[RMDB]
RNA sequence: GGGAACGACUCGAGUAGAGUCGAAAAACGGUCGUAUCCGAUACGUCGGAUACGACCGAUACUAGCACAUAUGUCAAAUUCCUAAUUAACGUUUUUUAUAUUCAUCGUUUCUUAGAGCCGUAAUUGUGCUGAUAUCAAUAUCAGGGAAGAACAUACCAUAUAGAGGUGUCAAGUACACCGAACGAUCGUGGUGCUCCCUCAGCCACGGGCGUGCUUGGACGCUAUUCCCACAUAUACGAGGAGGCGUAGUACGCUACGCCUCCUCGAGUGGCACGUUCGCGUGCCACAAAAGAAACAACAACAACAAC
Reactivity to DMS in 0.01 (KOAc 150mM, MgCl2 10mM, bicine 150mM(pH8.5), 24C), signal-to-noise 2, nucleotides 027 to 266: a200c110g020g010u030c000g010u000a000u000c000c000g000a060u020a050c120g000u000c010g040g010a010u010a000c000g010a010c000c000g020a000u000a020c050u010a030g020c020a030c050a090u000a010u010g010u020c150a070a140a210u000u030c080c000u000a040a050u030u010a100a030c030g000u000u020u030u010u010u040a070u030a130u060u020c120a040u000c030g020u000u000u000c010u020u000a040g000a180g000c160c080g040u000a050a120u010u010g000u000g010c010u000g010a060u020a060u010c060a070a120u000a050u000c130a050g000g010g010a010a040g010a090a140c100a120u010a110c000c030a030u000a050u020a120g020a160g010g010u000g010u000c010a060a100g010u020a030c020a000c020c000g030a030a040c070g000a020u000c080g000u000g000g000u000g020c120u000c000c000c000u000c070a250g000c020c020a010c060g030g010g000c000g000u000g030c070u010u000g000g010a100c220g000c060u000a150u000u000c000c010c000a080c210a090u010a090u000a150c110g000a020g000g000a030g000g000c010g030u000a000g050u030a110c150g050c000u000a000c000g040c000c000u000c000c000u000c000g010a010
Reactivity to 2A3 in 0.01 (KOAc 150mM, MgCl2 10mM, bicine 150mM(pH8.5), 24C), signal-to-noise 2, nucleotides 027 to 266: a000c020g000g000u000c010g010u020a000u030c020c000g000a010u030a080c230g130u020c020g010g000a000u000a000c000g000a010c010c000g000a000u010a010c000u080a000g010c070a050c030a040u230a070u130g040u090c020a020a050a160u280u060c020c000u040a060a040u040u050a040a040c060g020u140u000u090u020u190u060a220u230a060u240u150c020a110u150c040g010u010u010u000c010u020u050a050g020a040g070c030c000g100u070a130a090u130u040g020u020g050c030u030g060a040u050a030u280c100a120a090u060a070u300c030a130g020g040g030a040a130g000a000a070c050a080u170a070c000c010a030u130a010u070a240g180a070g080g000u020g000u010c070a100a070g050u080a030c000a000c000c030g010a000a010c050g020a000u090c020g000u020g040g000u000g020c000u100c050c000c040u060c000a000g000c000c020a010c050g010g010g020c000g000u010g020c050u020u070g050g030a000c030g020c020u010a000u030u020c030c050c000a090c030a040u300a000u000a070c030g000a000g000g000a000g040g000c000g000u000a000g000u000a070c140g040c080u000a000c030g000c000c000u050c030c010u010c000g000a000
This 307-nucleotide RNA was probed chemically with DMS and 2A3. Reactivities are given for positions 27 through 266. The 2A3 profile rests on 1,780 reads. High 2A3 reactivity points to a flexible backbone, as in loops and unpaired stretches. The RNA was probed in 150 mM KOAc, 10 mM MgCl2 and 150 mM bicine (pH 8.5) at 24 C. 2A3 adducts were read by reverse transcription with SuperScript II with manganese.